[RMDB]
RNA sequence: GGGAACGACUCGAGUAGAGUCGAAAAGAUAUGGACCCACCGCCCAGUGCCUAUAGGGAGCUUGUGGUGUCGGAAACGACACCUGAGCGAGGAUCUAUAGGCACUGUAACAAGUGGGUCCUAAGUCACGAAUGCUUGUAGUUCGCUACAAGCAUUCGAAAAGAAACAACAACAACAAC
Reactivity to DMS in 0.01 (KOAc 150mM, MgCl2 10mM, bicine 150mM(pH8.5), 24C), signal-to-noise 1, nucleotides 027 to 126: g010a080u010a300u010g030g000a030c000c000c000a000c000c150g030c300c190c030a030g020u000g000c000c010u010a020u040a000g000g010g000a020g030c010u000u000g010u010g070g010u000g040u020c030g020g020a130a090a130c060g000a010c000a010c000c000u000g010a000g010c000g010a080g010g000a030u010c000u000a000u000a030g000g000c000a000c000u010g000u000a070a000c270a300a030g040u000g000g000g010u000c000c000u000a000a090g000u000c020a150

The data come from the RNA Mapping Database (RMDB), library TTRINS. Structure probing data (DMS) for a 177-nucleotide construct.